An RNA of 177 nucleotides, treated with 2A3 and DMS and read out base by base.
For DMS, 18,339 sequencing reads were counted.
For DMS the reverse transcriptase was MarathonRT.
It was measured as part of the RMDB library OK2TST.
In probing experiments dimethyl sulfate is read out at A N1 and C N3, which are open when not base-paired.
2A3 adducts were read by reverse transcription with SuperScript II with manganese.
The reactions ran in a buffer of 150 mM KOAc, 10 mM MgCl2 and 150 mM bicine (pH 8.5), at 24 C.
RNA sequence: GGGAACGACUCGAGUAGAGUCGAAAAGUCAGGAACGUGGCCGUGGUGAGAUUUCAGCGAUUCAGGAAGUGGAGCGUGAUUAUCACUGCAAAGUUAUUGCAAUUGUGACGCUCAAUGAUGUGAUCAGACCUAGAUAUCGUUUCGACGAUAUCUAGGUAAAAGAAACAACAACAACAAC
Reactivity to 2A3 in 0.01 (KOAc 150mM, MgCl2 10mM, bicine 150mM(pH8.5), 24C), signal-to-noise 6, nucleotides 027 to 126: g070u040c040a010g050g070a090a070c050g020u040g030g010c000c030g030u030g020g050u050g020a080g020a060u070u100u040c030a030g040c020g030a050u050u090c030a030g130g060a150a050g110u080g090g010a030g010c020g000u010g040a070u050u190a050u140c030a020c050u000g000c020a030a040a050g130u220u140a180u150u030g020c000a020a050u070u090g030u020g040a000c010g000c010u030c000a010a070u110g040a040u100g030u070g060a040u050c020a020g030
Reactivity to DMS in 0.01 (KOAc 150mM, MgCl2 10mM, bicine 150mM(pH8.5), 24C), signal-to-noise 9, nucleotides 027 to 126: g010u000c050a060g010g010a070a060c090g020u000g010g010c050c060g020u000g010g010u010g010a070g010a100u010u000u000c070a080g020c080g000a080u010u000c090a070g000g010a090a110g020u010g010g000a030g010c010g020u000g000a080u000u010a090u010c090a070c120u000g010c010a010a030a190g010u010u000a100u000u000g010c020a040a110u010u000g010u000g010a030c040g010c010u000c020a090a060u000g000a070u000g010u000g010a130u000c060a110g000